[RMDB]
RNA sequence: GGGAACGACUCGAGUAGAGUCGAAAACGCUGGGUAUAGCUCUCUAUACAGGGAGGACCAGUUCUUCCUGAAGCGCGCACGGGAAGAACUGGUCCGACGAUCUGUAUGAGAGAGACUAUACCUGUGCUGAAGCGCGCACGGCAACCGAAAGGUGCGAUCCAAUCUAUUAGUUCGCUAAUAGAUUGGAAAAAGAAACAACAACAACAAC
Reactivity to 2A3 in 0.01 (KOAc 150mM, MgCl2 10mM, bicine 150mM(pH8.5), 24C), signal-to-noise 4, nucleotides 027 to 156: c040g010c060u160g020g000g000u000a000u000a010g000c000u010c000u000c000u000a000u000a010c000a010g000g000g010a010g000g000a010c000c000a000g000u010u000c000u000u000c000c000u030g040a180a070g000c010g000c010g000c010a020c030g020g000g000a000a000g020a010a010c000u000g020g000u020c010c000g000a000c000g000a000u000c000u000g020u020a000u280g050a030g000a000g000a010g040a050c000u000a000u000a000c000c000u000g000u040g000c060u150g050a100a020g000c010g000c000g020c010a000c020g080g010c070a200a140c010c010g060a100a030a030g010g010u020g030c000g010a040
Reactivity to DMS in 0.01 (KOAc 150mM, MgCl2 10mM, bicine 150mM(pH8.5), 24C), signal-to-noise 2, nucleotides 027 to 156: c070g050c060u000g010g010g020u000a020u000a010g000c010u000c000u010c000u000a070u000a030c010a030g000g000g030a020g010g020a000c000c000a020g010u000u010c010u000u010c010c010u000g000a050a070g020c010g020c010g040c010a300c020g010g000g000a040a020g000a000a030c000u000g010g010u000c000c000g010a020c170g000a020u000c010u010g010u000a030u010g020a070g000a050g010a020g000a060c000u000a030u000a010c000c010u010g020u010g000c030u010g000a110a060g010c010g030c000g010c000a040c050g020g020c020a110a300c010c020g000a100a160a190g010g020u010g010c020g000a150
Description
The record gives the reactivity of an RNA of 207 nucleotides to 2A3 and DMS. For 2A3, 6,441 sequencing reads were counted. For DMS the reverse transcriptase was MarathonRT. Conditions: 150 mM KOAc, 10 mM MgCl2 and 150 mM bicine (pH 8.5), 24 C. For DMS, 6,727 sequencing reads were counted. 2A3 adducts were read by reverse transcription with SuperScript II with manganese.